[RMDB]
This 177-nucleotide RNA was probed chemically with DMS and 2A3.

RNA sequence: GGGAACGACUCGAGUAGAGUCGAAAAGCAAACAUUCAGUUGCUCAGUUGGUUAGUUACCUUUCUGAACGCUGUAAUGUUAUUGCUGAUUCUAAGUCCUUCACACUUAUCUUUGGUGGCGUAGCUUAUCACAUGGGUAAGUUCGCUUACCCAUGUGAAAAAGAAACAACAACAACAAC
Reactivity to DMS in 0.01 (KOAc 150mM, MgCl2 10mM, bicine 150mM(pH8.5), 24C), signal-to-noise 4, nucleotides 027 to 126: g000c000a030a030a060c000a010u000u000c000a010g000u010u010g070c030u000c000a010g000u000u000g000g000u000u000a200g010u010u010a090c010c000u000u000u010c000u000g010a000a000c010g010c000u000g000u010a020a010u000g000u010u000a080u000u000g010c000u000g000a220u000u000c050u000a070a110g000u000c040c030u000u000c080a080c070a060c060u000u000a110u000c110u000u000u000g010g030u000g000g000c090g010u010a050g010c050u000u010a140
Reactivity to 2A3 in 0.01 (KOAc 150mM, MgCl2 10mM, bicine 150mM(pH8.5), 24C), signal-to-noise 2, nucleotides 027 to 126: g000c000a010a000a000c000a000u000u020c010a010g000u070u170g280c000u000c010a000g010u020u030g010g010u020u050a020g060u120u210a060c000c000u020u130u070c000u000g000a010a000c010g020c000u050g010u240a000a000u010g000u000u060a110u080u060g000c020u010g020a050u040u020c030u070a050a060g060u050c000c030u080u090c050a050c010a020c040u110u100a050u180c020u100u120u100g030g000u000g000g020c080g090u070a040g020c000u030u060a090
The DMS profile rests on 6,792 reads. For 2A3 the reverse transcriptase was SuperScript II with manganese. For 2A3, 1,610 sequencing reads were counted.